[RMDB]
RNA sequence: GGGAACGACUCGAGUAGAGUCGAAAAGGGGUCGAUCUUUUGACGUAGCUGAAAGACUCCAUCGAUCAUGUGCUGAAGCCUCCACGGCACAUGGGAGGAGGGGAGGCUACGAUAAGAUCGACGGAGGCACCCAAAUCCUGGGGUUCGCCCCAGGAAAGCGAAAAUCCUAGUUCGCUAGGAUUUUCGCAAAAGAAACAACAACAACAAC
Reactivity to 2A3 in 0.01 (KOAc 150mM, MgCl2 10mM, bicine 150mM(pH8.5), 24C), signal-to-noise 1, nucleotides 027 to 156: g120g020g000g040u000c000g000a060u040c030u110u150u100u220g250a210c000g000u000a000g000c030u100g150a200a100a000g200a170c040u060c030c040a150u300c020g000a010u020c000a000u000g010u020g000c020u010g010a150a000g000c000c020u000c010c010a010c020g010g060c010a000c000a000u000g000g000g000a000g040g050a040g000g000g010g000a050g000g030c050u000a010c000g000a000u010a030a040g000a000u000c000g000a000c000g000g000a000g000g000c000a040c010c000c000a010a080a080u040c000c000u020g000g000g000g000u020u100c140g210c000c000c000c060a010g000g020a000a000a020
Conditions: 150 mM KOAc, 10 mM MgCl2 and 150 mM bicine (pH 8.5), 24 C. An RNA of 207 nucleotides, treated with 2A3 and read out base by base. For 2A3 the reverse transcriptase was SuperScript II with manganese.